[RMDB]
RNA sequence: GGGAACGACUCGAGUAGAGUCGAAAAGGCUCCUCCUCCUCGGGAGUAGGCCCGUAGCGAUGGGGAGGGAUGCUAGGAGUUGGGGGAGACCGAAGCGAGGAGGAAAGCAAAGAAAGCAACGGGGCUAGGGCAGAUUCGUUCGCGAAUCUGAAAAGAAACAACAACAACAAC
Reactivity to 2A3 in 0.01 (KOAc 150mM, MgCl2 10mM, bicine 150mM(pH8.5), 24C), signal-to-noise 6, nucleotides 027 to 129: g060g000c010u000c010c010u020c000c000u000c010c000u030c010g030g000g020a080g050u060a030g020g090c040c000c000g050u070a030g080c080g070a090u170g010g000g000g030a040g000g000g000a080u080g010c020u050a040g070g010a050g030u110u130g020g000g000g010g010a020g030a000c000c020g010a040a000g060c040g020a010g020g000a010g000g000a050a020a000g020c040a010a040a060g070a030a060a000g020c030a040a020c030g010g000g000g000c010u060a050g010g060g000
Reactivity to DMS in 0.01 (KOAc 150mM, MgCl2 10mM, bicine 150mM(pH8.5), 24C), signal-to-noise 7, nucleotides 027 to 129: g000g000c030u030c050c020u030c020c040u000c020c020u030c040g020g050g000a030g040u000a050g000g000c050c020c000g050u000a060g000c040g040a090u050g030g000g020g040a030g000g000g000a060u040g030c110u000a080g000g000a080g030u000u000g010g050g020g040g020a100g030a100c050c000g000a080a050g040c020g030a050g020g040a030g020g030a020a020a030g020c070a040a050a060g000a080a070a080g030c010a090a120c100g030g010g020g030c070u000a070g030g040g010
Chemical mapping of a 170-nucleotide RNA with 2A3 and DMS. Reactivities are rounded to 0.1 and cut off at 0 and 3. Source: RMDB library 15KLIB, as collected in RNAgym. Reactivities are given for positions 27 through 129. Conditions: 150 mM KOAc, 10 mM MgCl2 and 150 mM bicine (pH 8.5), 24 C. 2A3 adducts were read by reverse transcription with SuperScript II with manganese.